Chemical mapping of a 177-nucleotide RNA with DMS and 2A3. The 2A3 profile rests on 1,030 reads. The DMS profile rests on 892 reads. DMS adducts were read by reverse transcription with MarathonRT. Reactivities are rounded to 0.1 and cut off at 0 and 3.

[RMDB]
RNA sequence: GGGAACGACUCGAGUAGAGUCGAAAACCUGGGAUCUUCGGAUCCCAGGAAAUAAAAUCAGCGGUAAGCUCCGGUAAAAUAUUACCCCUGAACCGGAGCUUAAAACGGGGUUGUUCGCAACCCCGAAGAAAUAUACGCAGUUCGCUGCGUAUAUUUCAAAAGAAACAACAACAACAAC
Reactivity to DMS in 0.01 (KOAc 150mM, MgCl2 10mM, bicine 150mM(pH8.5), 24C), signal-to-noise 1, nucleotides 027 to 126: c010c000u000g010g000g010a030u000c000u000u040c200g030g000a010u000c020c000c000a000g020g000a020a020a020u000a060a040a150a120u020c100a040g000c070g020g030u000a020a020g000c000u010c000c000g040g000u000a020a150a120a110u000a050u010u010a230c070c000c000c040u000g000a130a000c000c000g010g000a000g040c000u030u000a000a020a130a200c020g000g000g050g030u010u000g010u000u000c160g000c000a050a000c000c000c000c000g000a010a030
Reactivity to 2A3 in 0.01 (KOAc 150mM, MgCl2 10mM, bicine 150mM(pH8.5), 24C), signal-to-noise 1, nucleotides 027 to 126: c000c000u010g000g040g000a000u040c030u080u060c260g130g020a000u020c000c000c000a010g010g010a030a020a000u080a020a130a010a110u160c080a020g080c040g100g080u030a000a000g000c000u020c020c010g000g000u010a040a040a110a100u190a100u090u240a200c020c000c000c010u000g020a020a010c000c000g000g010a000g000c000u000u010a010a000a000a020c000g000g000g000g000u020u020g070u070u090c100g050c130a010a000c000c000c000c020g000a000a000